[RMDB]
About this RNA: Chemical mapping of a 207-nucleotide RNA with DMS and 2A3. For 2A3 the reverse transcriptase was SuperScript II with manganese. Values cover nucleotides 27 to 156. The data come from the RNA Mapping Database (RMDB), library M2RFPK.
RNA sequence: GGGAACGACUCGAGUAGAGUCGAAAACGGAAGCAUUAAUACCAUUCGAGCUAGUCAAUGCGUGGCGUGUCUCUCCGCAGCGUGUUGGCGAAUGUAAAGAGUGACUAAGCAUGUAGUACCGAGGAUGAUAAGAGCAAUUCGUUCGCGAAUUGCUCAACUGAAACAAGAAGUUCGCUUCUUGUUUCAGAAAAGAAACAACAACAACAAC
Reactivity to DMS in 0.01 (KOAc 150mM, MgCl2 10mM, bicine 150mM(pH8.5), 24C), signal-to-noise 4, nucleotides 027 to 156: c060g020g040a270a120g010c030a090u000u000a100a160u010a100c040c020a110u000u000c040g010a200g040c040u000a120g010u000c010a010a010u000g010c010g010u000g010g040c040g040u000g020u000c090u000c050u000c180c010g010c020a070g010c010g040u010g010u000u010g020g010c000g000a060a020u010g000u000a030a100a110g010a090g020u010g010a070c040u000a090a160g020c070a080u000g000u000a100g010u000a070c030c030g010a130g020g010a120u000g000a160u000a090a130g010a040g020c000a020a020u000u000c010g000u000u000c300g030c030g000a010a010u000u000g010c010u000c010a010a060
Reactivity to 2A3 in 0.01 (KOAc 150mM, MgCl2 10mM, bicine 150mM(pH8.5), 24C), signal-to-noise 8, nucleotides 027 to 156: c050g040g030a050a010g010c010a030u060u090a160a040u090a140c030c020a030u040u070c050g030a030g030c030u060a030g040u010c000a000a010u020g010c000g010u030g110g000c020g010u080g050u030c020u000c010u010c100c000g010c000a010g000c000g000u020g010u010u010g010g010c000g010a020a000u050g020u070a040a060a020g030a010g010u040g020a020c030u040a050a020g060c030a040u090g020u100a050g030u040a070c020c050g020a040g060g030a040u110g010a020u110a220a110g000a000g000c010a000a000u010u010c000g030u040u080c180g000c010g100a000a000u000u000g000c010u000c000a000a000